[RMDB]
RNA sequence: GGGAACGACUCGAGUAGAGUCGAAAAUAGUUUUUAAUCCUACAAGUGUCGGUCAAGACAUGCUCUGGAGGAACAAUGUAUGGUUGAACAGCUGCUGAACGAACUUGAUAAGUGCACAACGCCGGAGUAAGAUUUACCUCUUCGGAGGUAAAUCUUAAAAAGAAACAACAACAACAAC
Reactivity to DMS in 0.01 (KOAc 150mM, MgCl2 10mM, bicine 150mM(pH8.5), 24C), signal-to-noise 2, nucleotides 027 to 126: u010a080g000u010u000u010u010u010a050a140u020c000c010u010a080c110a070a170g010u000g010u000c020g030g000u010c090a080a090g010a030c070a080u000g010c070u010c070u000g000g020a060g020g000a070a100c060a090a030u010g040u010a070u010g010g010u000u000g020a100a110c110a060g000c040u010g000c030u000g000a070a060c070g020a080a030c070u000u010g030a060u000a040a110g030u000g000c040a040c060a020a080c130g000c040c040g000g000a070g020
The record gives the reactivity of an RNA of 177 nucleotides to DMS. Source: RMDB library OK2TST, as collected in RNAgym. For DMS, 1,522 sequencing reads were counted. Conditions: 150 mM KOAc, 10 mM MgCl2 and 150 mM bicine (pH 8.5), 24 C.